An RNA of 177 nucleotides, treated with DMS and read out base by base. In probing experiments dimethyl sulfate is read out at A N1 and C N3, which are open when not base-paired. Values cover nucleotides 27 to 126.
RNA sequence: GGGAACGACUCGAGUAGAGUCGAAAAGAUAGCUGACGUUGUCAAAGCGGAUAUCGUAACGUUCCGGCAUCUCGCUUUGCGCUGCGACGGGAAGCGGUGCUAUCGCCAUAAACUGCUCAAUCCGUUGUGUAAAGCAGGGGUUCGCCCCUGCUUUACAAAAAGAAACAACAACAACAAC
Reactivity to DMS in 0.01 (KOAc 150mM, MgCl2 10mM, bicine 150mM(pH8.5), 24C), signal-to-noise 2, nucleotides 027 to 126: g010a070u000a020g050c040u010g010a110c130g070u020u010g030u000c000a010a040a030g030c040g030g020a010u000a020u000c030g000u020a080a300c160g020u010u000c080c030g010g030c050a040u000c000u010c010g020c000u010u000u000g000c140g010c120u010g030c050g000a040c040g000g050g030a030a020g030c010g000g010u000g010c020u000a020u000c040g010c010c040a100u020a020a110a090c060u000g020c010u000c080a140a120u000c010c030g010u000u000g020